[RMDB]
RNA sequence: GGGAACGACUCGAGUAGAGUCGAAAAGCUAUCAUGCAAACUAGGGCUGGCUACUCUAGCACAGAAUCACAUCCCGAUAAUCAACAGUGCUAGAAGGUUGAUUAUACCAUUUAAUAUGCCGAGGCCAUCUCUAGUCCAGAUUCGUCUGGACUAGAGAAAAAGAAACAACAACAACAAC
Reactivity to 2A3 in 0.01 (KOAc 150mM, MgCl2 10mM, bicine 150mM(pH8.5), 24C), signal-to-noise 2, nucleotides 027 to 126: g010c000u030a030u300c050a050u200g050c020a050a100a040c060u110a060g020g020g010c010u020g010g000c000u040a040c000u000c000u000a000g010c010a010c000a040g150a100a060u090c030a050c010a190u020c000c020c000g010a030u060a050a030u030c020a010a060c020a030g020u010g010c000u020a020g010a020a010g050g000u010u030g070a190u060u040a010u090a060c000c000a010u070u080u100a140a110u130a080u170g020c020c020g190a120g070g000c010c000a040
Reactivity to DMS in 0.01 (KOAc 150mM, MgCl2 10mM, bicine 150mM(pH8.5), 24C), signal-to-noise 4, nucleotides 027 to 126: g000c000u030a100u020c080a090u010g000c050a120a120a110c090u000a110g000g020g020c030u000g000g020c030u000a210c070u000c000u000a000g000c010a000c000a070g010a070a110u020c230a080c170a100u000c010c010c020g000a030u010a030a020u020c030a060a090c090a060g000u000g010c010u000a000g000a020a060g000g020u000u000g000a060u000u000a020u020a090c130c040a120u000u040u030a100a080u010a040u010g050c020c010g000a110g020g000c030c060a150